The data come from the RNA Mapping Database (RMDB), library ARCHII. An RNA of 207 nucleotides, treated with 2A3 and read out base by base. The reactions ran in a buffer of 150 mM KOAc, 10 mM MgCl2 and 150 mM bicine (pH 8.5), at 24 C.
RNA sequence: GGGAACGACUCGAGUAGAGUCGAAAAUAAGGGCCGCCGUCCUCGCACUGGCUCGCUGACGGGCUAGGGUUCGCAAGAACCAGCGAGGUCAUUUACGUCAGAUAAGCCCCGUCGGUGUCACGACUGCGGGGACGAAAACCAAGUGACUCGCCGUCGUGUACCUAUCACUGUUCGCAGUGAUAGGUACAAAAGAAACAACAACAACAAC
Reactivity to 2A3 in 0.01 (KOAc 150mM, MgCl2 10mM, bicine 150mM(pH8.5), 24C), signal-to-noise 2, nucleotides 027 to 156: u150a030a040g020g010g020c030c020g010c030c000g050u000c000c010u010c000g000c000a030c040u020g010g000c020u080c110g060c050u080g010a030c030g000g000g000c060u070a070g030g010g060u000u000c000g010c050a040a070g000a010a030c010c010a000g040c040g020a000g000g070u030c010a010u080u220u170a070c040g040u030c070a010g000a100u040a040a060g040c000c000c000c000g030u010c000g020g050u120g060u080c020a020c080g070a020c050u010g000c000g000g000g000g000a000c000g000a000a000a000a000c020c020a130a010g080u040g110a030c000u000c050g060c040c040g100u050c000g020u020